[RMDB]
RNA sequence: GGGAACGACUCGAGUAGAGUCGAAAAAUCACGUCUAUAGGUCGACGCUUUGCAGUCAAGGCCGUACCGGGCGGGUACAAAACAUACAUGGAAGAUAACGGAAAGUGGGUGUGGUGCGAAAACCUUGCAAACUUCCUGGUAUGGAACGCAGACCUCCGUAAUGUGGGUACUUCGGUACCCACAUUACAAAAGAAACAACAACAACAAC
Reactivity to 2A3 in 0.01 (KOAc 150mM, MgCl2 10mM, bicine 150mM(pH8.5), 24C), signal-to-noise 1, nucleotides 027 to 156: a000u110c100a000c020g090u040c060u070a120u080a120g000g050u110c050g030a010c020g000c040u110u040u060g020c080a040g050u070c020a040a120g000g000c030c000g000u000a020c020c020g000g060g000c090g020g050g010u100a010c070a000a170a020a000c000a000u150a000c050a060u140g070g000a020a050g040a140u070a140a080c050g080g000a000a120a020g090u110g060g030g000u060g000u050g000g140u110g010c060g020a100a090a000a000c000c000u050u050g000c040a000a000a110c040u040u060c030c010u000g030g000u020a050u070g000g020a000a050c020g000c070a040g000a020c000c000u080c000c060

This 207-nucleotide RNA was probed chemically with 2A3. 2A3 adducts were read by reverse transcription with SuperScript II with manganese. Values cover nucleotides 27 to 156.